Source: RMDB library OK1LIB, as collected in RNAgym. This 177-nucleotide RNA was probed chemically with 2A3. As a SHAPE reagent, 2A3 marks flexible, mostly unpaired nucleotides at the ribose 2'-OH. Reactivities are given for positions 27 through 126. The RNA was probed in 150 mM KOAc, 10 mM MgCl2 and 150 mM bicine (pH 8.5) at 24 C.
RNA sequence: GGGAACGACUCGAGUAGAGUCGAAAACUCGCCAGUCCGUCUCUGCGCCUUGUCGGCGUGAUCCGGAUCCGCAAGUGGUUGUGGAACUUUCAGAUGAGGAAGGAGACACUUUCGGCGACGCCGCCUCGCAGCUCCCGCUGUUCGCAGCGGGAGCUGCAAAAGAAACAACAACAACAAC
Reactivity to 2A3 in 0.01 (KOAc 150mM, MgCl2 10mM, bicine 150mM(pH8.5), 24C), signal-to-noise 1, nucleotides 027 to 126: c010u000c000g010c020c000a010g090u160c020c050g000u000c000u090c010u010g040c010g010c000c000u130u090g250u160c020g010g020c080g010u040g000a000u000c000c090g100g000a100u020c000c000g020c050a060a000g180u040g050g300u160u070g120u050g050g020a020a020c000u000u100u050c010a080g000a200u130g100a000g090g010a030a090g000g060a110g000a000c000a000c040u140u180u150c190g000g010c030g000a010c110g000c000c010g000c000c000u000c080